[RMDB]
RNA sequence: GGGAACGACUCGAGUAGAGUCGAAAAUCGCCUGCAGAGCACCGUGUCGUGUCCGAGAGAGUCGUCCUGAACACUCUCCUGUCGACUUCAUGGAUUACCUCUGUGCGAGGUCCUAGAGGGCCUGGUAUCGUAUGUGGUCCUUCGGGACCACAUACGAAAAAGAAACAACAACAACAAC
Reactivity to DMS in 0.01 (KOAc 150mM, MgCl2 10mM, bicine 150mM(pH8.5), 24C), signal-to-noise 1, nucleotides 027 to 126: u000c080g020c000c230u000g000c010a020g000a030g020c130a090c000c010g100u020g010u020c040g010u000g000u040c070c040g000a050g000a000g000a030g030u000c150g020u000c040c200u010g020a050a030c070a050c020u000c000u000c010c060u000g020u040c070g000a040c000u010u000c010a010u010g000g010a060u000u010a170c300c000u000c000u010g030u000g000c050g040a030g040g000u000c010c000u000a060g000a080g010g000g000c060c010u000g000g000u010a070
Reactivity to 2A3 in 0.01 (KOAc 150mM, MgCl2 10mM, bicine 150mM(pH8.5), 24C), signal-to-noise 2, nucleotides 027 to 126: u010c040g070c010c010u000g000c000a000g000a000g000c010a010c020c000g000u010g000u000c020g060u020g020u000c050c060g080a080g000a000g020a000g150u170c120g020u050c170c120u080g120a090a000c010a000c030u020c000u050c010c030u080g060u120c030g080a020c000u010u010c000a050u030g020g000a110u040u220a120c000c000u000c000u020g060u010g000c000g030a010g000g030u020c000c000u060a090g070a180g030g000g000c000c030u030g020g070u180a110